Source: RMDB library TTRDEL, as collected in RNAgym. Chemical mapping of a 177-nucleotide RNA with DMS and 2A3.

[RMDB]
RNA sequence: GGGAACGACUCGAGUAGAGUCGAAAAGAUAUGGAGGAUCCUACUACACCUAUAAUCUCGGAAACGAGGUAGGUGGGUAGGAGUCCUCCUAAGUCAAAAGUUGGAGUCACUUCGGUGACUCCAACAACAACAGAUAGUUGUUCGCAACUAUCUGUUGAAAAGAAACAACAACAACAAC
Reactivity to DMS in 0.01 (KOAc 150mM, MgCl2 10mM, bicine 150mM(pH8.5), 24C), signal-to-noise 5, nucleotides 027 to 126: g010a040u000a300u010g010g010a020g000g010a300u000c000c000u000a010c000u000a150c000a010c000c000u000a070u010a230a110u010c000u000c000g000g000a080a090a190c000g010a010g020g010u000a000g000g020u000g000g000g010u000a000g000g000a010g000u000c000c000u000c010c000u000a010a060g000u000c020a120a090a090a110g000u000u000g000g000a030g000u000c000a010c000u000u010c200g020g010u000g000a000c000u000c000c000a000a000c010a050a130
Reactivity to 2A3 in 0.01 (KOAc 150mM, MgCl2 10mM, bicine 150mM(pH8.5), 24C), signal-to-noise 3, nucleotides 027 to 126: g020a010u090a040u140g000g010a010g000g000a000u010c030c000u010a010c000u240a300c010a010c000c010u070a060u080a300a300u140c000u000c010g060g020a070a100a070c000g000a010g000g020u010a000g000g000u010g000g000g010u000a000g000g000a000g000u000c000c000u000c000c000u000a000a010g020u000c010a000a000a070a090g010u000u000g020g000a030g010u020c010a020c030u080u110c300g090g000u010g000a000c000u030c000c000a000a000c000a000a000